[RMDB]
RNA sequence: GGGAACGACUCGAGUAGAGUCGAAAAGGUACGUAAAGAAAUUUGCGUGCGUUUACCUGUCAAACUCGGGGAAGCCAUUAGCGCGGUAAUCCCGAACCAAGCUCUCGCAAGAGAGAAGGUGUAGAGACUGGAAGGCAGGCAUCCUAACGUUAAGCCGCAAUCAUUUCAAGUUCGCUUGAAAUGAUUGAAAAGAAACAACAACAACAAC
Reactivity to DMS in 0.01 (KOAc 150mM, MgCl2 10mM, bicine 150mM(pH8.5), 24C), signal-to-noise 3, nucleotides 027 to 156: g010g070u030a000c000g020u000a010a000a050g010a210a150a200u000u010u020g000c030g020u000g010c010g000u000u000u000a060c020c020u000g020u020c020a160a080a080c070u000c050g000g030g020g000a090a300g010c010c010a190u000u000a100g030c090g030c080g000g000u000a050a120u000c000c010c010g000a070a020c010c020a010a190g020c000u000c000u000c010g010c300a080a220g010a030g010a020g040a020a120g020g010u000g010u000a110g010a130g020a070c040u010g000g000a110a170g000g010c010a050g010g000c010a070u000c020c010u010a030a130c120g000u010u000a070a120g030c020c060g000
Reactivity to 2A3 in 0.01 (KOAc 150mM, MgCl2 10mM, bicine 150mM(pH8.5), 24C), signal-to-noise 5, nucleotides 027 to 156: g080g000u020a000c000g000u010a000a030a020g070a100a240a150u000u000u020g010c010g000u000g000c000g000u010u010u020a040c010c000u010g020u030c030a110a050a080c040u010c020g000g000g000g010a080a110g020c000c010a090u130u160a060g070c160g000c050g070g010u040a020a080u100c010c000c010g010a010a010c010c000a070a020g030c010u000c000u000c000g030c040a110a030g020a000g010a000g010a060a010g020g000u030g020u060a060g040a020g020a110c090u090g050g030a070a040g040g000c010a000g000g010c000a040u010c000c000u030a080a030c060g020u050u080a090a020g060c040c030g030
An RNA of 207 nucleotides, treated with DMS and 2A3 and read out base by base. Conditions: 150 mM KOAc, 10 mM MgCl2 and 150 mM bicine (pH 8.5), 24 C. For 2A3 the reverse transcriptase was SuperScript II with manganese. Reactivities are given for positions 27 through 156.